[RMDB]
RNA sequence: GGGAACGACUCGAGUAGAGUCGAAAAGCGCCGCACGGGCGCAGUGCUGCGCGAGACUCUAUGCCCGUGACAGAGUGGUAUCAGAGCAGACUUGCUUUACAUCAAUGCCCAGCAGUUCACUCGAUGAGAUAUGUGCUAUCUUCGGAUAGCACAUAUCAAAAGAAACAACAACAACAAC
Reactivity to 2A3 in 0.01 (KOAc 150mM, MgCl2 10mM, bicine 150mM(pH8.5), 24C), signal-to-noise 2, nucleotides 027 to 126: g040c010g040c030c010g050c030a010c040g110g230g000c100g050c060a000g000u000g000c010u000g000c010g000c000g000a010g020a010c020u050c000u010a030u070g020c000c020c020g040u070g040a040c050a030g110a030g070u100g010g010u030a040u090c070a000g020a000g010c010a020g090a210c030u060u130g010c020u090u110u090a060c030a060u120c050a080a040u060g040c020c020c000a010g040c020a020g010u070u100c030a040c030u020c040g060a080u110g050a040
Reactivity to DMS in 0.01 (KOAc 150mM, MgCl2 10mM, bicine 150mM(pH8.5), 24C), signal-to-noise 2, nucleotides 027 to 126: g010c030g000c010c050g010c020a010c040g020g000g020c090g040c080a070g030u010g010c020u000g020c040g020c030g000a200g000a060c010u000c020u000a060u010g000c020c020c020g010u010g010a100c110a060g010a090g010u010g010g000u010a080u010c090a090g000a040g020c020a040g000a080c160u000u000g000c010u000u000u010a070c120a110u030c080a070a070u010g000c020c010c030a210g020c080a040g010u000u000c050a040c070u010c010g000a110u000g020a220